RNA sequence: GGGAACGACUCGAGUAGAGUCGAAAAGAUAUGGAGUACCCAUUUAAUGGUCAUUAGCGAAGAACUAUAAGGGUCGGAAACGACCCAUAGGGAGCUAAAUGACCAUUAAAUGGGUACUCCUAAGUCACUGAUAAGAUACCUUCGGGUAUCUUAUCAGAAAAGAAACAACAACAACAAC
Reactivity to DMS in 0.01 (KOAc 150mM, MgCl2 10mM, bicine 150mM(pH8.5), 24C), signal-to-noise 2, nucleotides 027 to 126: g000a020u000a300u000g000g010a000g000u010a010c000c000c010a000u000u010u000a010a010u000g000g000u000c010a000u000u000a020g020c000g020a180a230g000a110a300c010u010a010u000a130a140g040g010g030u010c000g010g000a110a130a280c030g020a020c000c000c000a000u010a000g000g000g000a070g000c000u000a020a040a050u000g030a020c010c010a000u000u000a000a010a010u000g000g000g000u000a000c000u000c000c000u000a000a040g010u000c030a290